[RMDB]
RNA sequence: GGGAACGACUCGAGUAGAGUCGAAAAGAUAUGGACAUAGGAAACUAUACUAGAGCUUGGAUUUAUGUGUGAGCUCGGAAACGAGCUCACACAUUGUCAGCUCAUAUAGAUAACUAUGUCCUAAGUCGUAGUAAGCUAUGUUCGCAUAGCUUACUACAAAAGAAACAACAACAACAAC
Reactivity to DMS in 0.01 (KOAc 150mM, MgCl2 10mM, bicine 150mM(pH8.5), 24C), signal-to-noise 2, nucleotides 027 to 126: g030a070u020a300u000g000g010a000c010a010u000a010g000g000a200a270a300c000u000a020u000a030c250u000a160g030a010g010c000u000u000g030g030a030u000u040u000a000u020g010u010g020u000g000a020g010c000u000c000g010g010a080a090a300c010g000a010g010c000u000c020a000c010a000c020a000u000u000g000u000c000a040g000c020u000c000a160u000a000u000a010g000a050u010a110a300c020u000a010u010g000u000c000c010u000a020a070g000u020c120
Reactivity to 2A3 in 0.01 (KOAc 150mM, MgCl2 10mM, bicine 150mM(pH8.5), 24C), signal-to-noise 3, nucleotides 027 to 126: g020a010u160a140u190g020g000a020c000a030u020a020g040g000a230a300a070c000u020a000u080a090c180u220a300g010a000g020c080u220u300g240g010a050u300u300u170a030u110g010u030g020u000g000a030g000c000u030c110g010g030a040a080a010c010g000a000g030c020u000c010a000c000a000c000a000u000u000g000u000c000a000g000c010u010c010a000u010a000u000a000g020a010u040a040a010c000u000a000u010g000u000c000c010u000a010a010g020u000c060